The record gives the reactivity of an RNA of 307 nucleotides to DMS and 2A3.
For 2A3 the reverse transcriptase was SuperScript II with manganese.
It was measured as part of the RMDB library POS240.
The reactions ran in a buffer of 150 mM KOAc, 10 mM MgCl2 and 150 mM bicine (pH 8.5), at 24 C.

RNA sequence: GGGAACGACUCGAGUAGAGUCGAAAAACUGGUACGUCAUCAUACGUGAUGACGUACCAGAGUCGGCGUCGUGACGGUCCAGCCGCAAUCGGUGCCGGUCGUCACCGAACUGCCGGGCCGCACCAGUGCCUUCCUGGUCGCCCAGGUGCGGGCACGGGUCGACGGUAUCGUGCUGCGUCGCGAAUUCACCGAAGGCACCGAUGUCAAGGCAGGGCAACGCCUGUACAAGAUCGAAGUCAUGGUACGCAUACGUGCGUACCAUGACAAAUCCGGAGUUCGCUCCGGAUAAAAGAAACAACAACAACAAC
Reactivity to DMS in 0.01 (KOAc 150mM, MgCl2 10mM, bicine 150mM(pH8.5), 24C), signal-to-noise 6, nucleotides 027 to 266: a150c010u010g000g010u000a000c000g000u000c000a010u010c010a030u010a130c180g030u000g000a020u000g000a010c010g020u010a000c000c010a000g000a050g030u010c080g000g000c030g020u000c150g010u010g000a140c160g010g010u010c020c010a130g030c010c030g020c210a150a050u010c010g000g020u000g000c020c030g010g000u000c080g010u000c140a100c140c020g000a110a060c050u000g000c000c010g010g000g000c070c030g000c080a030c010c000a060g010u000g000c020c010u000u010c050c020u000g010g000u000c220g010c260c010c010a060g010g000u010g010c120g000g000g020c020a020c010g000g000g000u000c080g010a190c010g010g010u000a050u020c010g000u010g010c020u020g010c170g010u010c020g010c060g000a110a130u020u010c140a080c090c020g010a160a180g010g010c010a030c020c000g000a030u000g000u020c140a140a210g000g000c010a070g000g010g010c030a130a050c070g010c000c010u000g030u010a060c090a130a130g000a090u010c060g010a130a130g010u010c010a000u010g010g000u010a010c020g000c000a050u020a110c120g030u010g020c000g020u010a000c000c000a010u010g010a000c000a010a090
Reactivity to 2A3 in 0.01 (KOAc 150mM, MgCl2 10mM, bicine 150mM(pH8.5), 24C), signal-to-noise 3, nucleotides 027 to 266: a030c000u010g000g000u000a000c000g010u000c000a000u000c000a020u030a120c210g080u030g010a000u010g000a020c010g000u020a010c010c020a010g010a010g030u050c010g000g030c020g010u080c070g090u170g080a100c080g060g000u010c010c000a000g000c010c010g040c070a030a260u040c020g000g000u000g000c010c010g050g050u030c040g010u020c030a070c110c020g010a060a040c000u040g000c000c020g000g010g000c040c020g000c010a020c000c010a020g010u030g040c010c040u080u100c030c010u030g020g030u180c080g090c040c000c000a030g020g050u130g150c100g010g000g020c040a000c020g020g000g000u060c060g010a200c020g020g000u130a300u230c030g050u140g000c040u060g110c120g130u180c010g000c030g060a040a080u210u130c030a040c040c030g050a090a050g000g020c000a000c010c000g000a010u000g020u020c070a090a010g030g000c000a020g020g000g020c010a030a010c000g020c010c010u060g060u130a090c050a080a100g040a180u260c070g100a220a010g010u000c010a040u000g000g020u010a020c000g020c000a000u020a080c250g100u040g000c010g000u000a000c000c010a030u010g010a020c000a000a010